[RMDB]
Conditions: 150 mM KOAc, 10 mM MgCl2 and 150 mM bicine (pH 8.5), 24 C. The record gives the reactivity of an RNA of 177 nucleotides to 2A3 and DMS. For 2A3, 1,721 sequencing reads were counted.
RNA sequence: GGGAACGACUCGAGUAGAGUCGAAAAAUGUGUGCCUGUAGUCCUAGCUAUUGGGGAAGCUGAGGUGGGAGGAUCACUUGAGCCUGGGAGUUGCAGGUUGCAGUGAGCUAUGAUCACACCACUGCACACAUAACCGGGAUUUCGAUCCCGGUUAUGUAAAAGAAACAACAACAACAAC
Reactivity to 2A3 in 0.01 (KOAc 150mM, MgCl2 10mM, bicine 150mM(pH8.5), 24C), signal-to-noise 2, nucleotides 027 to 126: a000u120g050u030g020u020g040c010c000u060g010u060a040g060u040c000c000u000a020g000c020u060a150u210u180g060g010g010g040a060a030g040c040u070g010a030g020g020u060g030g000g010a020g050g000a080u110c010a000c040u030u080g040a000g000c030c010u030g020g000g060a160g060u140u130g020c010a000g020g000u040u090g040c010a000g010u020g010a030g010c030u110a060u230g090a120u190c010a050c000a000c060c000a030c000u030g030c010a030c010
Reactivity to DMS in 0.01 (KOAc 150mM, MgCl2 10mM, bicine 150mM(pH8.5), 24C), signal-to-noise 3, nucleotides 027 to 126: a080u010g020u000g010u000g010c010c040u000g030u000a080g000u000c020c000u010a060g010c080u000a090u000u010g010g000g000g010a110a090g000c050u000g030a050g010g010u000g000g000g010a060g000g000a090u010c030a030c050u010u010g010a090g010c020c010u020g020g000g010a090g030u010u010g020c020a050g010g000u010u000g030c010a020g020u010g000a070g020c090u010a080u000g000a120u010c090a090c100a110c010c000a030c030u000g010c020a060c150
Source: RMDB library OK2TRN, as collected in RNAgym.